An RNA of 177 nucleotides, treated with DMS and 2A3 and read out base by base.
The 2A3 profile rests on 2,203 reads.

RNA sequence: GGGAACGACUCGAGUAGAGUCGAAAACAGACGGGAACUCAGUCUCAUCUGGAACGGUGACAGAGUGUUUAUCGAUAAGUGGUGCAACCCAAGCUGUGCCAGAGUCAAGAUGGGAGUCAUCAGAGCAAAGAUACUAGUCGUUCGCGACUAGUAUCUUAAAAGAAACAACAACAACAAC
Reactivity to DMS in 0.01 (KOAc 150mM, MgCl2 10mM, bicine 150mM(pH8.5), 24C), signal-to-noise 4, nucleotides 027 to 126: c070a120g000a100c080g010g000g000a110a100c050u000c060a210g010u000c040u000c040a090u000c030u010g000g020a060a090c110g020g000u000g000a060c130a110g000a080g030u000g000u000u000u010a080u020c070g000a170u010a060a150g020u000g030g010u010g010c110a060a060c030c050c100a040a180g010c030u000g020u000g010c010c010a050g010a100g010u010c100a070a050g030a050u000g010g010g000a080g010u000c040a060u000c070a070g010a110g010c170a070
Reactivity to 2A3 in 0.01 (KOAc 150mM, MgCl2 10mM, bicine 150mM(pH8.5), 24C), signal-to-noise 2, nucleotides 027 to 126: c030a000g100a050c010g030g010g030a030a050c020u020c070a050g080u020c010u010c000a060u000c010u030g070g020a040a030c040g000g000u060g050a020c020a020g100a070g090u100g050u040u170u090a110u060c040g040a070u080a210a130g080u090g150g030u050g020c020a030a100c000c000c050a050a030g030c010u020g010u020g040c020c010a040g030a020g130u040c020a000a040g020a030u050g080g030g000a020g040u100c010a020u050c030a020g000a010g100c050a060

For DMS the reverse transcriptase was MarathonRT. Conditions: 150 mM KOAc, 10 mM MgCl2 and 150 mM bicine (pH 8.5), 24 C.